[RMDB]
Record summary:
Source: RMDB library OK2TST, as collected in RNAgym. Structure probing data (DMS and 2A3) for a 177-nucleotide construct. Values are in units of 0.01, from 0 to 300, in steps of 10. For DMS, 2,254 sequencing reads were counted. For 2A3, 1,988 sequencing reads were counted.
RNA sequence: GGGAACGACUCGAGUAGAGUCGAAAAAUUUGAUGUGACUCCAGGCACUGGUGCUGAUCCUAAAGGUACCACGACUCUGUCAUACGCCGGUGGUUACUAUGCAACGGCUAAAACCACUCCUGGUAUCAUUCACGAAUGUGUUCGCACAUUCGUGAAUAAAAGAAACAACAACAACAAC
Reactivity to DMS in 0.01 (KOAc 150mM, MgCl2 10mM, bicine 150mM(pH8.5), 24C), signal-to-noise 4, nucleotides 027 to 126: a070u010u000u010g030a100u010g020u000g010a140c080u000c050c060a060g020g010c300a100c110u000g010g010u000g000c030u000g010a090u010c080c060u010a040a100a220g000g020u000a010c000c000a080c130g010a100c050u010c080u010g000u000c050a060u010a080c240g030c030c030g020g010u000g010g020u020u000a080c210u000a060u020g030c030a100a060c110g010g000c040u000a060a050a090a050c090c080a040c050u010c030c020u000g000g010u000a090u000c130
Reactivity to 2A3 in 0.01 (KOAc 150mM, MgCl2 10mM, bicine 150mM(pH8.5), 24C), signal-to-noise 1, nucleotides 027 to 126: a000u180u140u150g080a090u110g030u020g050a020c030u000c030c000a000g000g040c050a010c070u030g050g000u000g010c020u030g030a090u160c030c050u100a120a060a040g050g020u000a020c000c000a020c060g060a050c030u110c070u160g040u070c010a060u050a140c060g030c020c020g030g010u020g000g030u050u090a080c090u070a090u190g010c040a090a140c080g180g000c020u080a080a040a040a000c030c000a010c030u010c010c000u040g000g020u030a060u110c010